An RNA of 177 nucleotides, treated with 2A3 and DMS and read out base by base. The reactions ran in a buffer of 150 mM KOAc, 10 mM MgCl2 and 150 mM bicine (pH 8.5), at 24 C. It was measured as part of the RMDB library OK2TRN.
[RMDB]
RNA sequence: GGGAACGACUCGAGUAGAGUCGAAAACACUGCAUAAUUCUCUUACUGUCAUGCCAUCCGUAAGAUGCUUUUCUGUGACUGGUGAGUACUCAACCAAGUCAUUCUGAGAAUAGUGUAUGCGGCGACCCUUCUACUAUAGCUUCGGCUAUAGUAGAAGAAAAGAAACAACAACAACAAC
Reactivity to 2A3 in 0.01 (KOAc 150mM, MgCl2 10mM, bicine 150mM(pH8.5), 24C), signal-to-noise 8, nucleotides 027 to 126: c020a000c010u040g000c020a030u040a080a140u290u060c040u000c000u050u050a050c030u060g060u120c040a100u150g100c080c020a060u040c020c020g030u020a030a020g010a030u050g030c020u040u040u040u020c020u040g030u000g010a010c000u000g020g010u010g020a050g090u180a140c080u050c080a090a120c030c010a150a040g010u000c000a020u120u020c060u110g090a050g010a030a020u040a050g060u050g010u050a020u030g000c000g010g000c000g040a050c010c000
Reactivity to DMS in 0.01 (KOAc 150mM, MgCl2 10mM, bicine 150mM(pH8.5), 24C), signal-to-noise 7, nucleotides 027 to 126: c110a080c030u000g000c020a020u000a060a090u010u000c080u010c010u000u010a060c130u010g000u000c100a080u010g010c120c060a060u000c030c120g010u010a050a110g000a030u000g020c060u000u000u000u010c030u010g010u000g000a020c010u000g000g000u000g000a080g000u010a090c160u010c060a100a060c010c010a030a080g020u000c000a030u000u010c130u000g010a030g010a020a030u000a090g030u010g020u000a010u000g010c010g000g010c060g010a160c040c040